[RMDB]
RNA sequence: GGGAACGACUCGAGUAGAGUCGAAAAGAUAUGGACCUGAGUAGGGAGAAGAGUGUCGGAAACGACACGACUUCGAGGAUCUACCAGGUCCUAAGUCAAAAGCGUCGAACCUUCGGGUUCGACGCAAGUUAUCUGACGAGUUCGCUCGUCAGAUAACAAAAGAAACAACAACAACAAC
Reactivity to DMS in 0.01 (KOAc 150mM, MgCl2 10mM, bicine 150mM(pH8.5), 24C), signal-to-noise 1, nucleotides 027 to 126: g000a020u000a080u010g000g000a010c000c000u000g000a170g000u000a000g000g010g040a050g000a030a000g000a300g000u000g000u000c000g010g000a010a030a040c000g000a000c000a000c010g000a130c050u000u020c000g030a100g000g020a070u010c000u000a000c010c010a000g000g020u000c000c000u000a000a070g010u000c000a140a070a120a150g040c020g000u000c000g000a020a000c010c010u000u030c260g020g000g000u020u000c000g010a000c000g000c000a000a010
Reactivity to 2A3 in 0.01 (KOAc 150mM, MgCl2 10mM, bicine 150mM(pH8.5), 24C), signal-to-noise 1, nucleotides 027 to 126: g000a000u010a030u060g010g000a020c000c000u060g000a100g110u010a020g020g040g050a120g020a050a010g000a000g000u000g020u000c000g010g010a050a000a020c000g020a000c000a030c020g150a200c010u020u010c020g070a210g120g050a070u000c010u010a020c000c000a000g000g010u000c000c000u000a000a000g000u010c010a000a000a080a160g020c020g020u000c010g010a000a010c010c040u070u160c300g110g020g050u000u000c010g000a010c030g000c010a000a000
Source: RMDB library TTRDES, as collected in RNAgym. Structure probing data (DMS and 2A3) for a 177-nucleotide construct. For 2A3, 2,514 sequencing reads were counted. Values cover nucleotides 27 to 126. DMS adducts were read by reverse transcription with MarathonRT.